[RMDB]
RNA sequence: GGGAACGACUCGAGUAGAGUCGAAAACUUCGUUCGCGAAGGUGAAAGGGGUCGAGAGACCCGCAGAUAAGUUUGUCAGAGCUGAAGCCUCCACGGCUCUUGGAUUUAACUUGUAGGGUUGGUGACGGAGGCACCCGCAAAACUGUUUCGACAGUAACCCCACUACUAUGUUCGCAUAGUAGUGGGGAAAAGAAACAACAACAACAAC
Reactivity to 2A3 in 0.01 (KOAc 150mM, MgCl2 10mM, bicine 150mM(pH8.5), 24C), signal-to-noise 2, nucleotides 027 to 156: c000u010u000c000g040u080u110c300g000c010g090a010a000g010g070u100g080a100a050a040g020g000g010g000u070c080g010a050g000a000g000a190c000c000c000g040c000a020g000a140u180a120a040g050u060u250u220g050u040c020a000g000a000g000c010u020g030a090a040g010c000c000u000c020c010a000c040g000g000c020u040c000u060u200g080g000a040u100u130u270a110a070c070u050u040g070u110a170g020g040g010u030u070g060g030u090g020a050c080g000g000a010g000g010c000a000c000c000c000g090c020a040a120a040a040c030u060g050u020u100u090c080g070a040c050a050g040u070a000a150
Chemical mapping of a 207-nucleotide RNA with 2A3. It was measured as part of the RMDB library RNAMAK. Reactivities are given for positions 27 through 156.